[RMDB]
RNA sequence: GGGAACGACUCGAGUAGAGUCGAAAAGAUAUGGAGCUCUCCCCACCUCCCGGAUGGCGAAGAACUCGGAAACGAGGGAGCCAGAAGGGAGAGGAGCUCCUAAGUCAAACUGACGUUCGCGUCAGAAGUACAUGAAUUAGUUCGCUAAUUCAUGUACAAAAGAAACAACAACAACAAC
Reactivity to 2A3 in 0.01 (KOAc 150mM, MgCl2 10mM, bicine 150mM(pH8.5), 24C), signal-to-noise 5, nucleotides 027 to 126: g040a060u190a180u250g000g000a000g000c000u010c020u100c040c040c000c010a010c010c000u000c010c000c000g030g030a020u010g000g000c010g090a300a020g010a090a040c000u000c010g000g030a050a060a040c020g000a000g000g000g020a000g010c000c000a000g000a010a020g000g000g000a000g000a010g000g010a000g000c000u000c000c000u010a060a010g070u030c120a110a100a180c000u010g000a010c010g020u070u110c300g020c010g130u000c000a010g010a070a040
Reactivity to DMS in 0.01 (KOAc 150mM, MgCl2 10mM, bicine 150mM(pH8.5), 24C), signal-to-noise 7, nucleotides 027 to 126: g000a070u000a210u000g000g010a010g010c000u000c000u010c120c000c010c050a300c100c010u000c010c010c000g000g000a300u000g010g000c000g000a130a160g000a090a160c000u000c000g000g000a090a090a200c010g000a020g000g010g000a050g010c010c000a020g000a300a180g000g000g000a010g010a040g020g000a030g000c000u000c000c000u000a010a060g010u000c070a090a110a170c010u000g010a010c010g010u000u010c160g030c020g010u000c000a010g010a030a120